[RMDB]
RNA sequence: GGGAACGACUCGAGUAGAGUCGAAAAUAAAGAGACCUAGACAUGGGAACCUGGUGAAAUUUAAGGACCAAAGAGAGAAAACAACAUCAACAGAUCCUAAAACAAAAUUAGAAACUAGUCACAAAAGCAUAGUAUCCAGGUUCGCCUGGAUACUAUGAAAAGAAACAACAACAACAAC
Reactivity to DMS in 0.01 (KOAc 150mM, MgCl2 10mM, bicine 150mM(pH8.5), 24C), signal-to-noise 2, nucleotides 027 to 126: u090a030a060a110g020a190g000a110c040c010u000a060g000a120c080a080u010g000g010g000a060a060c030c070u000g000g000u010g000a110a100a080u040u000u010a100a070g030g000a050c050c040a060a070a060g030a160g080a110g030a150a120a090a040c210a070a070c130a060u050c020a020a080c070a040g000a070u030c000c010u000a020a030a030a100c070a090a020a060a060u030u020a060g000a090a160a030c030u000a030g000u020c100a030c060a070a080a110a080g000
Reactivity to 2A3 in 0.01 (KOAc 150mM, MgCl2 10mM, bicine 150mM(pH8.5), 24C), signal-to-noise 2, nucleotides 027 to 126: u190a000a050a000g030a000g050a000c080c000u020a030g040a040c030a090u090g070g000g000a060a110c020c030u000g000g000u070g070a120a010a050u230u230u080a000a070g020g010a030c010c000a020a120a010g030a000g040a000g010a050a020a000a000c060a000a000c000a030u020c020a000a000c030a020g060a050u050c020c020u070a090a080a000a020c040a010a060a100a130u070u060a050g030a010a030a010c030u020a010g010u040c070a020c030a140a090a000a000g020